[RMDB]
RNA sequence: GGGAACGACUCGAGUAGAGUCGAAAAGAAAGAAAGAAAGAGUGUUCAAUGAUGAUUUCUAUUUGUUUGCCUGAUUUCCUUUUGGAUAAUGAAGGCAUCUUUAGUCACUACCUCUUCUGAGACACAAUUAAACGUUGGAGUUCGCUCCAACGUUUAAAAAAGAAACAACAACAACAAC
Reactivity to 2A3 in 0.01 (KOAc 150mM, MgCl2 10mM, bicine 150mM(pH8.5), 24C), signal-to-noise 4, nucleotides 027 to 126: g060a020a030a000g040a020a090a000g060a010a110a000g060a010g010u230g020u080u080c060a050a070u100g060a130u020g020a030u070u080u100c050u040a110u070u110u080g210u050u060u030g000c000c000u010g010a040u010u000u060c000c000u030u160u140u300g010g010a070u100a240a030u100g030a030a000g000g000c000a000u000c000u020u020u030a010g030u030c000a000c030u060a030c010c010u020c000u050u000c000u050g070a030g030a020c040a000c000a100a060
Reactivity to DMS in 0.01 (KOAc 150mM, MgCl2 10mM, bicine 150mM(pH8.5), 24C), signal-to-noise 3, nucleotides 027 to 126: g000a100a060a070g010a120a090a060g000a070a010a060g010a070g000u020g020u020u040c100a050a040u010g020a070u010g000a140u010u030u020c050u020a030u030u010u010g000u010u010u020g010c020c000u000g000a150u000u000u010c000c000u010u000u020u070g010g000a010u020a030a020u010g010a200a010g000g010c000a010u000c020u000u010u000a090g010u020c030a040c050u010a080c060c010u000c010u000u000c020u000g010a120g010a060c150a040c100a050a150

This 177-nucleotide RNA was probed chemically with 2A3 and DMS. DMS adducts were read by reverse transcription with MarathonRT.